[RMDB]
RNA sequence: GGGAACGACUCGAGUAGAGUCGAAAAGCUGAGGUGGGAGGAUCCCUUGAGAUGGGGAAAUCAAGGCUGCAGUGAGCCAUGAUAGUUCCACUGCACUCCAGCCUGGGUGACAGAAGGAGAACCUGUCUGUGUGCAUGGCAUUCGUGCCAUGCACACAAAAAGAAACAACAACAACAAC
Reactivity to DMS in 0.01 (KOAc 150mM, MgCl2 10mM, bicine 150mM(pH8.5), 24C), signal-to-noise 1, nucleotides 027 to 126: g060c070u010g000a070g000g020u020g010g040g000a090g000g000a100u000c090c010c000u000u000g010a050g040a180u010g000g020g000g000a110a090a080u000c050a060a040g000g000c220u020g090c060a050g010u030g020a060g010c000c070a190u020g000a100u020a100g020u000u000c060c010a090c050u050g030c020a100c060u030c040c020a100g020c080c000u000g010g000g010u000g000a090c100a080g000a130a050g000g000a130g000a100a110c160c030u000g000u000c050
This 177-nucleotide RNA was probed chemically with DMS. For DMS, 729 sequencing reads were counted.